[RMDB]
RNA sequence: GGGAACGACUCGAGUAGAGUCGAAAAAUUGGUAUGGUGCCUAUUUCUGAAGAAGAAGUGACGCAAGAAGAUGUGGAAAACGUCGUCCAUACCGCGAAAUCGGUGCGUGUGCGCGAUGAGCAUCGUGCGCCUCCGUUACAUUCGUGUAACGGAGGCGAAAAGAAACAACAACAACAAC
Reactivity to DMS in 0.01 (KOAc 150mM, MgCl2 10mM, bicine 150mM(pH8.5), 24C), signal-to-noise 1, nucleotides 027 to 126: a150u020u000g000g000u000a040u000g010g000u000g010c030c050u000a020u010u000u000c020u020g000a130a110g000a150a020g000a020a020g030u000g000a070c130g010c070a080a100g000a100a120g010a020u010g020u000g000g020a090a050a110a030c000g050u000c000g000u010c010c000a020u000a000c020c010g030c220g000a050a030a060u000c150g040g030u000g000c040g040u010g000u000g020c010g000c100g000a050u020g000a150g000c060a030u000c020g030u010g040
Reactivity to 2A3 in 0.01 (KOAc 150mM, MgCl2 10mM, bicine 150mM(pH8.5), 24C), signal-to-noise 1, nucleotides 027 to 126: a030u090u120g000g000u020a060u050g030g060u070g000c000c000u000a030u030u040u020c020u040g180a240a230g030a050a020g010a000a000g010u030g060a020c030g000c100a020a000g090a080a010g020a080u050g020u040g070g060a020a260a020a040c000g010u040c020g000u020c030c000a000u010a000c030c000g000c040g050a100a100a010u120c040g000g040u010g010c120g000u150g000u070g100c000g020c000g070a060u050g070a020g000c060a020u030c050g030u020g030